[RMDB]
RNA sequence: GGGAACGACUCGAGUAGAGUCGAAAAUCCGCAGCAUUCGUGCUGCGGAACUUACCGAGGUUCUUGCUCGGUAUAACAACAAAACCCUUGGAAACAAGGGAAACAAUGAGCUAUUCGUAGCUCAUAAAACAUCUAUACCCUUCGGGGUAUAGAUGUUAAAAGAAACAACAACAACAAC
Reactivity to DMS in 0.01 (KOAc 150mM, MgCl2 10mM, bicine 150mM(pH8.5), 24C), signal-to-noise 2, nucleotides 027 to 126: u000c010c000g030c000a000g000c000a030u000u000c160g020u010g020c000u010g000c010g000g000a010a020c120u000u000a010c010c020g000a010g010g010u020u010c090u020u010g000c000u000c010g000g000u000a010u010a100a060c090a060a060c140a080a110a090a120c020c000c000u000u000g000g000a180a070a150c020a020a030g000g000g000a010a040a070c130a110a040u000g000a000g010c000u000a050u000u010c230g010u000a000g020c010u000c000a010u000a050a050
Reactivity to 2A3 in 0.01 (KOAc 150mM, MgCl2 10mM, bicine 150mM(pH8.5), 24C), signal-to-noise 3, nucleotides 027 to 126: u010c000c020g030c000a010g020c010a030u000u050c180g080u030g000c000u010g020c030g000g000a010a010c000u020u020a010c000c000g000a010g060g050u240u170c120u180u290g100c000u010c010g010g030u000a000u040a010a000c010a010a010c010a040a080a020a080c010c000c000u000u000g030g000a040a040a010c010a000a000g010g000g050a050a000a010c040a010a040u030g000a000g010c000u010a020u040u120c180g090u040a000g010c010u010c010a000u030a000a050